Chemical mapping of a 177-nucleotide RNA with 2A3 and DMS. DMS (dimethyl sulfate) methylates the pairing face of unpaired adenines and cytosines. For DMS the reverse transcriptase was MarathonRT. The reactions ran in a buffer of 150 mM KOAc, 10 mM MgCl2 and 150 mM bicine (pH 8.5), at 24 C.
RNA sequence: GGGAACGACUCGAGUAGAGUCGAAAAAUCAUCGCAUUUGGUGAGGCCUAUUCCGAAUUUCAGAAAAGAGGCGCCGAGGUGAUUGGCUGCUCCACCGACACAGCCCCCUCUCACUUUUGCUGGAAGGAUUUUGUAAUAAGUUCGCUUAUUACAAAAUAAAAGAAACAACAACAACAAC
Reactivity to 2A3 in 0.01 (KOAc 150mM, MgCl2 10mM, bicine 150mM(pH8.5), 24C), signal-to-noise 4, nucleotides 027 to 126: a000u030c020a000u030c000g020c190a240u070u120u300g030g000u040g010a060g020g080c000c030u070a150u100u010c010c010g060a150a160u040u070u090c030a080g060a070a160a010a010g060a150g140g040c160g030c190c110g030a010g000g070u100g030a200u090u150g030g010c010u020g000c010u070c040c010a090c040c040g050a010c020a000c010a080g040c010c000c010c000c010u000c000u000c000a030c000u060u070u060u130g040c020u020g000g020a010a000g030g010
Reactivity to DMS in 0.01 (KOAc 150mM, MgCl2 10mM, bicine 150mM(pH8.5), 24C), signal-to-noise 7, nucleotides 027 to 126: a090u010c010a040u010c020g010c220a120u000u010u010g010g020u000g000a050g000g010c030c030u000a120u010u010c030c020g000a110a150u010u010u000c040a050g000a090a040a060a100g010a110g000g020c210g040c210c140g010a050g000g010u000g010a100u010u000g020g000c020u000g000c140u010c050c050a090c130c080g000a070c140a060c050a060g010c010c000c010c010c010u000c020u000c040a070c030u000u000u000u000g010c040u000g020g010a050a050g010g010